[RMDB]
Chemical mapping of a 177-nucleotide RNA with DMS and 2A3. For DMS, 832 sequencing reads were counted. The 2A3 profile rests on 928 reads. The reactions ran in a buffer of 150 mM KOAc, 10 mM MgCl2 and 150 mM bicine (pH 8.5), at 24 C.

RNA sequence: GGGAACGACUCGAGUAGAGUCGAAAAUCGGACAACUGUAUGAAUCUGCUCAUCCUCACCGUACGACUUUUUCGGAUCAUCCAGAUAUUUCAGAUUCAUCUUGGCAAACAUCCAGUGAGGAGUCCAGCCUCAUAGCCUCCUUCGGGAGGCUAUGAGGAAAAGAAACAACAACAACAAC
Reactivity to DMS in 0.01 (KOAc 150mM, MgCl2 10mM, bicine 150mM(pH8.5), 24C), signal-to-noise 1, nucleotides 027 to 126: u000c040g050g010a040c170a070a180c300u000g000u030a100u000g000a000a060u000c040u000g000c300u000c050a000u000c070c060u000c050a050c120c160g000u000a130c180g000a060c070u000u000u000u030u000c000g040g000a040u050c180a110u000c020c220a300g000a120u050a010u040u000u000c070a060g050a040u000u000c070a000u000c050u040u040g000g000c060a040a120a160c180a300u090c000c000a100g120u000g000a100g000g000a220g000u000c000c000a040g020
Reactivity to 2A3 in 0.01 (KOAc 150mM, MgCl2 10mM, bicine 150mM(pH8.5), 24C), signal-to-noise 3, nucleotides 027 to 126: u110c020g010g020a010c000a160a050c060u120g000u210a060u060g060a040a010u100c010u030g020c020u070c050a060u000c030c020u050c010a050c000c020g040u070a020c050g000a120c090u150u140u070u230u100c050g090g010a080u120c030a030u020c110c040a000g170a070u050a070u050u190u150c080a040g050a110u030u000c000a030u000c000u060u140g050g020c040a120a070a000c040a060u070c040c000a020g000u000g130a020g050g020a030g000u000c000c020a050g030